[RMDB]
RNA sequence: GGGAACGACUCGAGUAGAGUCGAAAAGAUAUGGACCGUUGUAGGGAGCUCGAGACGAUAUAUCUUUUGGUCGGAAACGACCAAAAGAUAUAUCGUCUCCGAGCAUCGAUCUAUGCGGUCCUAAGUCGAUUAGAUGGAAGUUCGCUUCCAUCUAAUCAAAAGAAACAACAACAACAAC
Reactivity to DMS in 0.01 (KOAc 150mM, MgCl2 10mM, bicine 150mM(pH8.5), 24C), signal-to-noise 2, nucleotides 027 to 126: g000a080u010a300u000g000g000a020c010c000g010u000u020g070u000a010g000g000g000a020g020c000u000c000g000a040g010a010c000g010a030u000a010u000a010u000c000u010u000u010u000g020g020u000c010g060g000a070a120a230c010g010a010c020c000a000a000a000a000g010a000u000a000u000a010u000c000g020u000c010u000c060c020g030a010g010c000a090u000c180g010a090u000c000u000a000u010g000c000g000g000u000c000c000u000a000a100g000u010c100